This 170-nucleotide RNA was probed chemically with 2A3. The data come from the RNA Mapping Database (RMDB), library 15KLIB. For 2A3, 3,276 sequencing reads were counted. The reactions ran in a buffer of 150 mM KOAc, 10 mM MgCl2 and 150 mM bicine (pH 8.5), at 24 C.

RNA sequence: GGGAACGACUCGAGUAGAGUCGAAAAUGGUGUUGAGGGUGAACUACCUGUAGCUGUAGUCAAUGAUAAGAUCUUCACCAAGAGUGGCGUUAAUGACAUUUGUAUGUUUGAGAAUAAAACCACUUUGAACCCUUGCCGUUCGCGGCAAGGAAAAGAAACAACAACAACAAC
Reactivity to 2A3 in 0.01 (KOAc 150mM, MgCl2 10mM, bicine 150mM(pH8.5), 24C), signal-to-noise 3, nucleotides 027 to 129: u090g000g000u010g000u040u040g010a000g020g070g030u040g000a080a000c000u050a000c000c050u110g110u150a020g030c080u040g020u000a000g010u020c010a050a060u100g070a050u020a080a000g020a060u000c000u060u050c040a010c040c020a020a000g000a000g020u020g000g000c080g010u050u090a050a020u080g030a000c010a000u130u130u170g160u080a140u080g030u000u070u130g080a050g020a050a040u110a090a080a020a000c000c010a000c000u020u030u100g040a000a090c000